[RMDB]
RNA sequence: GGGAACGACUCGAGUAGAGUCGAAAAUAAGGCAAGAUUGGUGUCUGUUUUGUUCACUGAGGCAUCCUCAGCACCUGUAGAAGUACUGGACUCUUGAUAAAAAAUUGUGAGGUGAGUGAAAGAAAGAAGAGUUAAAGCUUGUAAAGUGCUUAGCGCACCAUGGUCCUAAUUUCGAUUAGGACCAUGGAAAAGAAACAACAACAACAAC
Reactivity to DMS in 0.01 (KOAc 150mM, MgCl2 10mM, bicine 150mM(pH8.5), 24C), signal-to-noise 2, nucleotides 027 to 156: u000a070a110g020g030c020a060a080g010a170u000u000g020g020u010g030u000c040u010g020u000u010u010u000g030u010u010c060a070c060u000g010a100g020g010c050a110u000c030c020u000c050a020g040c020a030c050c060u000g020u000a130g010a100a080g000u000a050c080u010g020g000a100c030u010c040u010u000g010a180u040a000a020a090a100a090a160u000u000g020u000g000a020g010g020u010g000a060g020u010g020a070a070a070g010a090a060a090g010a050a070g000a120g020u000u010a080a050a120g030c050u010u000g000u000a010a030a100g000u000g000c010u000u000a130g030c050g030c040a140
Reactivity to 2A3 in 0.01 (KOAc 150mM, MgCl2 10mM, bicine 150mM(pH8.5), 24C), signal-to-noise 4, nucleotides 027 to 156: u170a040a010g040g000c040a030a020g040a130u060u050g040g020u020g030u040c040u020g050u030u050u040u050g050u050u070c070a050c130u060g040a030g050g000c040a090u130c020c040u030c010a030g000c010a040c010c020u040g030u070a030g030a110a020g000u070a050c060u040g040g030a030c010u010c020u040u070g050a050u170a050a090a010a020a070a110u200u160g030u020g040a030g040g000u040g020a020g010u040g020a070a070a050g040a010a080a000g020a020a000g030a000g010u030u080a050a120a000g010c020u060u040g070u140a050a080a070g050u070g040c000u040u030a030g050c020g010c030a000
Chemical mapping of a 207-nucleotide RNA with DMS and 2A3. The data come from the RNA Mapping Database (RMDB), library OK3TST. The RNA was probed in 150 mM KOAc, 10 mM MgCl2 and 150 mM bicine (pH 8.5) at 24 C. The DMS profile rests on 4,497 reads.